[RMDB]
RNA sequence: GGGAACGACUCGAGUAGAGUCGAAAAGGGACUGGCCCGAUGAAGCCCGGCAACCUAACUUUAUUUAAGAGUAAAGUGAAGGUGCUAAUUCCAGCAAAAUGGUGUAUUCCGUUUUGGUAGAUAAGAGAAGCGUGACAUGAGUUCGCUCAUGUCACAAUCAGACUAACAUCUUCGGAUGUUAGUCUGAAAAAGAAACAACAACAACAAC
Reactivity to DMS in 0.01 (KOAc 150mM, MgCl2 10mM, bicine 150mM(pH8.5), 24C), signal-to-noise 2, nucleotides 027 to 156: g010g020g000a180c030u000g010g010c000c000c030g030a180u000g010a150a070g000c060c010c010g000g010c000a070a050c030c000u000a140a040c010u000u000u000a000u000u000u010a160a260g000a220g000u010a000a020a010g020u010g010a080a020g000g020u000g010c050u000a060a130u010u000c010c010a130g010c040a040a020a030a020u000g000g020u000g010u000a110u000u000c010c000g050u000u010u000u020g010g010u000a020g010a060u000a050a120g000a160g020a080a090g030c110g000u000g010a000c000a000u000g020a030g030u000u000c300g020c000u000c000a000u010g020u010c000a000c000a010a040
Reactivity to 2A3 in 0.01 (KOAc 150mM, MgCl2 10mM, bicine 150mM(pH8.5), 24C), signal-to-noise 4, nucleotides 027 to 156: g000g000g000a020c020u030g030g060c000c000c010g040a050u100g070a050a030g020c020c010c030g010g000c020a110a090c000c000u010a000a000c020u030u000u050a060u100u130u130a260a100g160a000g040u010a010a000a000g000u010g080a140a030g010g000u000g000c000u000a010a050u140u040c020c010a020g030c020a050a010a010a030u000g010g010u140g050u180a090u180u070c010c010g010u000u020u020u010g050g010u090a140g060a190u120a160a110g070a030g050a180a020g080c070g060u000g000a000c000a000u000g000a000g030u040u110c200g030c050u000c000a000u000g000u000c000a000c000a000a000